RNA sequence: GGGAACGACUCGAGUAGAGUCGAAAAGGCUCUUCACACCAUGCUGCAGCUGCCUGGAGUGGGGAGUGGGGAAGGAGUGGUGUUGGCAAUUCAGAACUGUCUUACUGUCUUUUUUAUCUCGUCAGUGCCUCUCUCAGAGAUAUGAAGUGAAAGCCAGGUUUCCCUAUGUUUUCGAACAUAGGGAAACAAAAGAAACAACAACAACAAC
Reactivity to 2A3 in 0.01 (KOAc 150mM, MgCl2 10mM, bicine 150mM(pH8.5), 24C), signal-to-noise 2, nucleotides 027 to 156: g040g000c010u020c020u030u000c020a000c010a040c020c020a060u020g000c030u120g030c060a130g040c060u050g000c010c020u030g010g040a140g000u010g000g010g020g000a020g020u140g000g010g000g030a070a070g040g030a040g050u080g000g070u040g000u040u050g040g010c040a080a100u070u080c030a060g060a140a060c040u080g030u070c010u060u040a070c010u050g110u110c000u070u140u130u010u060u070a060u080c050u030c040g110u070c040a060g010u030g130c050c000u040c010u000c010u020c060a020g010a000g000a030u020a030u100g000a090a020g050u030g070a080a090a050g020c000c050a010g090